RNA sequence: GGGAACGACUCGAGUAGAGUCGAAAAGGGGGAAGGAUCAUAUGACGAGAGGGGAUGAGCUGGUAAAGAGGGGUGGAACGUCGGGUGGAAGCACUCCCAAGAAGAGCAGAGAGAAGGCAAGAAUCGGUGAGCGUAAGGUUCGCCUUACGCAAAAGAAACAACAACAACAAC
Reactivity to 2A3 in 0.01 (KOAc 150mM, MgCl2 10mM, bicine 150mM(pH8.5), 24C), signal-to-noise 6, nucleotides 027 to 129: g020g000g000g000g000a010a050g040g020a000u020c010a050u080a110u220g050a020c040g020a000g020a030g040g020g000g000a010u050g000a040g030c060u060g000g040u090a040a070a030g040a030g000g000g010g020u050g010g020a040a020c020g080u030c010g020g010g010u060g010g020a010a020g000c020a030c050u020c010c020c010a010a000g020a020a000g010a000g000c070a020g020a000g020a000g010a080a020g020g010c010a020a010g010a040a040u070c050g060g000u060g040a010
Reactivity to DMS in 0.01 (KOAc 150mM, MgCl2 10mM, bicine 150mM(pH8.5), 24C), signal-to-noise 5, nucleotides 027 to 129: g010g010g000g010g010a070a020g000g020a040u040c110a100u000a120u000g000a090c110g010a070g000a070g000g000g000g000a040u010g030a070g010c070u030g000g000u050a060a080a080g000a050g010g000g010g030u020g020g020a040a050c070g060u020c070g020g000g040u030g030g020a070a050g030c130a090c110u000c030c030c050a070a040g030a080a050g020a060g000c090a000g000a080g010a050g010a000a030g020g020c130a060a070g010a070a080u040c080g000g030u000g040a190